[RMDB]
RNA sequence: GGGAACGACUCGAGUAGAGUCGAAAAGUAGCGGCCGCGGUCGUCGACAAGCACCUCGAUACCAUGAGCCAACAGCACCUCAAGGGCAGAAAUCAUCGCGGGCUCGCUCAACGCAUGGGUGUCGCGGGUAGUACAAGACUUUCGAGUCUUGUACUACAAAAGAAACAACAACAACAAC
Reactivity to 2A3 in 0.01 (KOAc 150mM, MgCl2 10mM, bicine 150mM(pH8.5), 24C), signal-to-noise 4, nucleotides 027 to 126: g100u090a010g010c030g030g000c020c010g030c060g030g010u080c040g010u010c020g020a030c030a100a040g040c020a100c050c010u000c010g020a010u020a070c000c020a030u070g040a020g030c030c010a050a040c030a060g040c010a060c020c010u050c070a060a080g030g010g000c040a020g120a060a100a030u110c090a010u050c030g000c010g070g030g010c070u080c040g000c040u010c050a050a070c060g010c050a090u120g060g000g030u090g020u040c000g010c030g040g070
Reactivity to DMS in 0.01 (KOAc 150mM, MgCl2 10mM, bicine 150mM(pH8.5), 24C), signal-to-noise 5, nucleotides 027 to 126: g020u000a110g010c070g000g000c040c040g010c050g010g000u000c100g030u000c040g000a090c120a090a110g020c110a120c060c030u000c030g010a060u010a100c060c030a060u000g010a100g020c040c020a070a100c090a070g000c070a070c110c030u000c080a070a100g010g000g020c070a080g000a060a080a090u000c100a060u000c050g030c090g000g010g000c030u010c030g000c050u000c070a070a100c130g010c050a090u000g010g010g020u000g010u000c060g000c040g010g010